[RMDB]
RNA sequence: GGGAACGACUCGAGUAGAGUCGAAAAAUGAGUUCAGCCUCAACGAGAUCUGCUGCCUCUGUGGACCUGACAGCCCCAGGAAGAGACACACACGCACAGUGCCCGAUCCUGAGGAGGAACGAGCACUUCAGAGCCGUGCACGCCAGCCAGGCCGUGAAUAAUUUACUCAUUUCGAUGAGUAAAUUAUAAAAGAAACAACAACAACAAC
Reactivity to DMS in 0.01 (KOAc 150mM, MgCl2 10mM, bicine 150mM(pH8.5), 24C), signal-to-noise 3, nucleotides 027 to 156: a140u000g000a130g010u000u000c060a090g020c060c030u000c040a100a120c060g000a100g000a110u000c030u000g000c040u000g010c060c020u010c040u000g020u000g040g010a070c020c000u020g020a120c000a110g000c010c020c010c030a130g020g020a100a080g020a120g030a070c040a070c030a050c020a070c040g050c040a110c090a100g020u000g010c000c010c010g020a150u000c010c010u020g010a200g020g010a090g010g020a020a060c020g010a060g010c020a050c010u000u000c040a090g010a130g020c050c020g000u000g000c010a060c050g000c030c020a110g000c030c050a090g020g010c040c020g030u000g000a100
Reactivity to 2A3 in 0.01 (KOAc 150mM, MgCl2 10mM, bicine 150mM(pH8.5), 24C), signal-to-noise 4, nucleotides 027 to 156: a010u080g010a010g030u110u140c040a020g040c010c000u060c030a080a110c070g040a050g010a150u030c040u070g030c030u040g000c020c010u060c030u030g000u060g040g030a060c010c000u020g040a060c030a060g030c020c000c000c010a000g040g020a060a040g040a030g050a030c020a010c000a010c000a010c090g020c030a040c020a070g000u010g020c000c020c020g020a050u020c010c010u100g080a150g060g130a020g000g010a050a020c010g010a010g010c000a000c000u100u120c100a060g020a010g090c050c020g010u020g010c020a020c060g010c020c020a010g040c020c010a010g020g010c030c010g020u040g020a020